RNA sequence: GGGAACGACUCGAGUAGAGUCGAAAAGAUAUGGAUAGGUCCUACCCACCAACCUGUUAGAGCUUGGAUUUACUCAUCGGAAACGAUGAGUUGUCAGCUCGAGAGGUUGAGGGACCUAUCCUAAGUCCUCAAACAGUACCUUCGGGUACUGUUUGAGAAAAGAAACAACAACAACAAC
Reactivity to DMS in 0.01 (KOAc 150mM, MgCl2 10mM, bicine 150mM(pH8.5), 24C), signal-to-noise 2, nucleotides 027 to 126: g000a180u000a110u000g000g010a010u000a030g000g000u020c010c000u010a150c050c020c020a300c100c000a010a000c000c000u010g050u000u000a100g010a000g010c010u000u000g030g010a020u000u000u000a000c010u000c000a010u000c000g040g000a100a080a300c020g030a010u000g040a010g020u000u000g000u010c010a040g040c000u000c000g000a160g000a000g030g010u010u000g000a110g040g000g010a000c000c000u000a010u000c000c000u000a000a030g010u030c170
This 177-nucleotide RNA was probed chemically with DMS.
It was measured as part of the RMDB library TTRINS.